[RMDB]
RNA sequence: GGGAACGACUCGAGUAGAGUCGAAAAGAUAUGGACGUAAGACAUCGACGAUCUCGUUCGGAAACGAACGAGGGGAGAUGCUUACGUCCUAAGUCAAAAGUGUGAGUCCGUUCGCGGACUCACACAACUAUAAGUGUACGUUCGCGUACACUUAUAGAAAAGAAACAACAACAACAAC
Reactivity to 2A3 in 0.01 (KOAc 150mM, MgCl2 10mM, bicine 150mM(pH8.5), 24C), signal-to-noise 2, nucleotides 027 to 126: g000a000u010a000u050g010g000a010c000g000u020a000a020g090a140c000a000u010c020g300a300c020g000a210u010c000u000c010g000u010u010c000g000g010a010a000a000c000g000a000a000c020g000a050g000g030g140g010a080g000a000u000g000c000u010u010a000c000g000u010c000c000u000a000a000g000u010c010a000a010a060a120g020u000g030u000g000a000g000u000c120c010g080u210u210c300g060c030g230g000a000c000u000c000a000c000a000c000a000a000
Reactivity to DMS in 0.01 (KOAc 150mM, MgCl2 10mM, bicine 150mM(pH8.5), 24C), signal-to-noise 1, nucleotides 027 to 126: g000a010u000a040u020g010g000a010c000g010u000a010a010g000a090c020a010u000c000g020a100c260g010a030u010c000u000c000g020u000u000c000g000g000a010a010a030c010g010a010a010c010g000a020g000g000g020g010a030g000a010u000g020c000u000u000a000c000g000u000c000c000u010a000a040g000u000c010a100a090a110a100g010u000g030u000g000a000g000u000c030c000g020u010u010c240g020c000g010g000a040c000u000c000a000c000a000c010a000a300

An RNA of 177 nucleotides, treated with 2A3 and DMS and read out base by base.
The RNA was probed in 150 mM KOAc, 10 mM MgCl2 and 150 mM bicine (pH 8.5) at 24 C.
It was measured as part of the RMDB library TTRDEL.
For 2A3 the reverse transcriptase was SuperScript II with manganese.
For DMS the reverse transcriptase was MarathonRT.